[RMDB]
RNA sequence: GGGAACGACUCGAGUAGAGUCGAAAAACAUGCUACCAUGGACCGUACAGAGGGCAGCGAGACCGUGAGAUGGAGCGAAUCCCUGCAAGCGGGUCCCAGUUCGGCUCGCCGUAUGCAACUCGACGGCAGUAAUUAUGAAUUUCGAUUCAUAAUUACUAAAAGAAACAACAACAACAAC
Reactivity to 2A3 in 0.01 (KOAc 150mM, MgCl2 10mM, bicine 150mM(pH8.5), 24C), signal-to-noise 7, nucleotides 027 to 126: a000c040a030u130g010c020u060a060c010c010a050u050g040g010a040c000c010g000u070a040c040a060g040a030g010g030g000c010a010g010c000g010a030g040a160c010c010g030u100g040a190g010a070u080g010g020a050g040c080g060a050a070u110c000c000c000u010g050c060a050a030g050c050g010g000g000u010c000c000c000a010g010u050u050c000g010g000c000u000c010g000c000c000g050u050a070u160g030c010a030a080c000u000c020g020a010c000g020g000c000
Reactivity to DMS in 0.01 (KOAc 150mM, MgCl2 10mM, bicine 150mM(pH8.5), 24C), signal-to-noise 6, nucleotides 027 to 126: a060c130a080u020g000c050u010a070c030c010a050u010g010g000a150c020c020g020u010a070c140a110g010a040g010g000g010c030a090g000c000g000a040g000a150c020c020g000u010g010a130g010a070u020g000g010a110g020c090g010a150a100u010c020c010c010u010g000c140a110a120g010c090g000g000g000u010c020c020c020a110g000u020u010c050g000g000c010u000c010g010c010c140g000u010a030u040g010c080a080a070c030u000c030g000a020c020g000g000c070